Structure probing data (DMS and 2A3) for a 207-nucleotide construct. The RNA was probed in 150 mM KOAc, 10 mM MgCl2 and 150 mM bicine (pH 8.5) at 24 C. Values are in units of 0.01, from 0 to 300, in steps of 10. For 2A3, 2,610 sequencing reads were counted.
[RMDB]
RNA sequence: GGGAACGACUCGAGUAGAGUCGAAAAAAUAUCGGUCCGCAUCACCCAGCUACACACGGUGUUCUUCAUGUGAAGACUGUGCUUGAUGGCGAACAAAUUGCAGAUAUCGACCCUGAUAUUGGCUAUCUUCAUCGAUGUGAGGAACAGAUCUGUGAAGACAGGUAUCGUAAUUCGUUACGAUACCUGUAAAAGAAACAACAACAACAAC
Reactivity to DMS in 0.01 (KOAc 150mM, MgCl2 10mM, bicine 150mM(pH8.5), 24C), signal-to-noise 2, nucleotides 027 to 156: a040a070u000a060u000c020g040g040u000c010c040g040c040a120u000c020a060c040c020c080a300g000c040u010a270c050a040c010a050c020g020g040u000g040u010u010c090u000u000c070a140u010g030u010g010a080a120g000a040c010u000g020u000g010c010u000u010g000a130u010g020g010c080g020a080a090c060a060a030a120u000u000g020c010a060g000a030u000a030u000c010g020a080c040c020c030u000g010a050u000a060u000u000g020g020c020u010a080u010c000u000u000c000a040u010c300g000a140u000g020u000g010a150g030g020a080a140c040a080g000a040u000c060u000g020u010g000a080a120g000
Reactivity to 2A3 in 0.01 (KOAc 150mM, MgCl2 10mM, bicine 150mM(pH8.5), 24C), signal-to-noise 3, nucleotides 027 to 156: a030a000u260a040u070c030g020g020u000c040c030g010c020a030u010c010a020c010c030c000a020g050c070u080a030c020a010c000a010c060g060g000u060g090u110u040c050u050u040c030a090u120g120u070g090a010a000g050a070c020u050g010u050g050c050u050u070g030a090u060g100g040c010g020a050a050c030a060a070a030u170u120g000c010a020g030a030u020a020u060c030g040a160c030c000c000u090g040a030u040a030u060u050g070g000c060u050a030u050c010u040u010c010a020u040c070g050a040u090g060u030g130a100g000g070a040a050c020a010g090a060u020c010u050g020u040g080a030a020g030